Overview:
The record gives the reactivity of an RNA of 177 nucleotides to DMS and 2A3. Source: RMDB library VIROID, as collected in RNAgym. Conditions: 150 mM KOAc, 10 mM MgCl2 and 150 mM bicine (pH 8.5), 24 C.
RNA sequence: GGGAACGACUCGAGUAGAGUCGAAAAGCGAUGGUAAGAGUGGAGGAAAGUUCGGAGGGAAAUCCCAAGAAGGUCAUUCGAGAUUCAAGAGGUGAGGAGGGAUCCCCGAGACGCUGGAGGAGCACCGGUACUGUUUGUAGUUCGCUACAAACAGUACAAAAGAAACAACAACAACAAC
Reactivity to DMS in 0.01 (KOAc 150mM, MgCl2 10mM, bicine 150mM(pH8.5), 24C), signal-to-noise 3, nucleotides 027 to 126: g030c070g020a060u000g010g020u010a080a100g000a090g010u010g000g020a080g000g000a050a070a120g010u000u000c070g000g010a090g010g000g030a050a030a070u010c010c000c000a090a170g000a090a080g000g010u000c080a120u000u000c060g010a130g000a120u010u020c140a070a050g000a090g000g020u010g000a020g030g000a120g010g000g000a080u010c030c010c010c040g000a190g020a030c070g020c090u010g000g010a060g000g000a080g000c080a060c110c100g000
Reactivity to 2A3 in 0.01 (KOAc 150mM, MgCl2 10mM, bicine 150mM(pH8.5), 24C), signal-to-noise 2, nucleotides 027 to 126: g050c060g020a070u110g030g020u050a050a020g030a060g070u050g010g050a040g010g050a130a010a000g080u130u110c060g000g040a040g020g000g010a080a100a070u020c020c020c010a000a010g050a020a020g080g050u070c040a020u120u070c050g040a030g000a210u080u100c080a030a030g070a030g120g000u040g040a030g070g000a040g000g020g010a010u080c000c000c010c010g010a040g020a010c060g000c050u050g020g020a060g020g010a000g030c020a020c010c060g040